[RMDB]
RNA sequence: GGGAACGACUCGAGUAGAGUCGAAAAUGGCUAGAGAUUUAUUCGCACCCUCGUUCGUACUCAUAACCGCAUCAGGUCUCCAAGGUUAGCAGCCUCUAGUUGAUAGAAGAAUGUAGAUAAGGGAAGUGAGAGGUCUUCUUUUCGAAGAAGACCUCUCAAAAGAAACAACAACAACAAC
Reactivity to 2A3 in 0.01 (KOAc 150mM, MgCl2 10mM, bicine 150mM(pH8.5), 24C), signal-to-noise 1, nucleotides 027 to 126: u120g010g000c000u020a030g000a010g000a050u000u040u190a120u080u160c050g010c040a090c000c060c000u000c040g070u020u000c000g040u030a140c080u030c080a110u100a030a100c110c000g090c040a090u060c040a000g040g000u000c000u000c020c020a000a040g050g020u080u060a000g010c030a040g010c000c000u000c000u000a000g020u020u110g140a110u050a020g050a040a040g050a060a080u110g030u060a050g000a050u140a220a020g090g040g000a050a000g060u010
Reactivity to DMS in 0.01 (KOAc 150mM, MgCl2 10mM, bicine 150mM(pH8.5), 24C), signal-to-noise 1, nucleotides 027 to 126: u000g020g000c100u080a170g000a000g080a150u000u000u070a110u020u020c100g000c170a000c000c000c050u000c020g000u000u010c090g060u020a000c060u000c090a080u000a110a120c250c040g010c030a120u050c060a070g060g000u030c030u000c060c070a090a020g030g020u000u010a190g070c100a030g030c180c000u000c010u060a050g000u000u000g000a000u010a070g000a030a070g000a060a050u010g050u000a000g000a070u010a120a150g000g020g000a060a010g010u000